[RMDB]
RNA sequence: GGGAACGACUCGAGUAGAGUCGAAAAGAUAUGGAACGUCUGACGUGCGAAGAACUGUUUCGGAAACGAAACAGGGAGCACAGUCAGAGCGUUCCUAAGUCAAAGGGAGCAAGUUCGCUUGCUCCCACACUUUCCAUGUCUUCGGACAUGGAAAGUGAAAAGAAACAACAACAACAAC
Reactivity to 2A3 in 0.01 (KOAc 150mM, MgCl2 10mM, bicine 150mM(pH8.5), 24C), signal-to-noise 2, nucleotides 027 to 126: g040a040u090a070u150g000g000a010a000c010g000u000c030u020g000a020c020g020u020g040c030g280a300a030g010a130a070c010u020g000u030u010u010c000g010g020a080a070a070c010g000a000a010a000c000a000g030g020g000a000g020c000a020c080a120g000u000c000a010g000a010g030c000g000u000u010c020c000u000a080a000g020u030c080a070a060a180g000g010g020a000g000c000a000a010g020u080u180c260g080c220u000u000g010c000u000c000c010c000a000
Reactivity to DMS in 0.01 (KOAc 150mM, MgCl2 10mM, bicine 150mM(pH8.5), 24C), signal-to-noise 2, nucleotides 027 to 126: g000a050u000a300u010g010g010a000a020c000g010u000c000u000g010a000c010g000u000g010c010g020a100a150g000a110a190c010u000g000u000u010u000c010g000g000a110a090a160c000g010a000a000a000c010a010g000g000g000a080g010c000a040c000a060g020u000c000a010g010a040g000c010g000u010u010c000c000u000a020a090g010u010c030a100a120a150g010g010g010a020g010c010a000a010g000u000u010c290g010c000u010u010g010c000u000c000c000c010a010